Description
Structure probing data (DMS and 2A3) for a 177-nucleotide construct. The 2A3 profile rests on 4,247 reads. The DMS profile rests on 4,367 reads. Conditions: 150 mM KOAc, 10 mM MgCl2 and 150 mM bicine (pH 8.5), 24 C. 2A3 adducts were read by reverse transcription with SuperScript II with manganese.

RNA sequence: GGGAACGACUCGAGUAGAGUCGAAAAAUCUGGGCAGUUAAUCAUUAGAGCCAUAGAUGAUGGUGGCUGUAUGGUCCACGUAACCUUGUACUCUUCGAUGAUUCGCAAGGCAAAGGCGGGAUCGAAGCGCUGGUCAUAUAUUCGUAUAUGACCAGCGAAAAGAAACAACAACAACAAC
Reactivity to DMS in 0.01 (KOAc 150mM, MgCl2 10mM, bicine 150mM(pH8.5), 24C), signal-to-noise 3, nucleotides 027 to 126: a020u000c040u020g030g000g000c020a100g030u070u020a110a110u080c070a090u000u010a070g000a090g000c030c010a020u030a070g020a070u010g010a080u020g000g030u010g010g000c000u010g020u020a020u030g000g000u000c010c010a020c080g000u000a060a080c020c010u080u020g000u010a070c160u000c000u000u010c080g030a010u010g000a110u040u000c020g000c000a040a010g000g000c190a030a090a080g000g000c020g000g000g000a000u000c010g010a040a020g010
Reactivity to 2A3 in 0.01 (KOAc 150mM, MgCl2 10mM, bicine 150mM(pH8.5), 24C), signal-to-noise 6, nucleotides 027 to 126: a000u030c010u030g000g020g010c020a080g070u110u100a160a080u120c030a070u040u150a040g050a000g110c010c030a020u120a040g230a090u200g030a060u100g090g030u010g030g000c030u000g050u130a140u110g070g010u030c000c000a030c040g010u020a020a060c000c000u000u020g080u040a060c050u000c000u050u030c010g080a090u080g080a140u100u090c050g000c070a080a080g300g040c040a060a030a020g050g010c020g000g010g010a000u010c000g000a010a000g010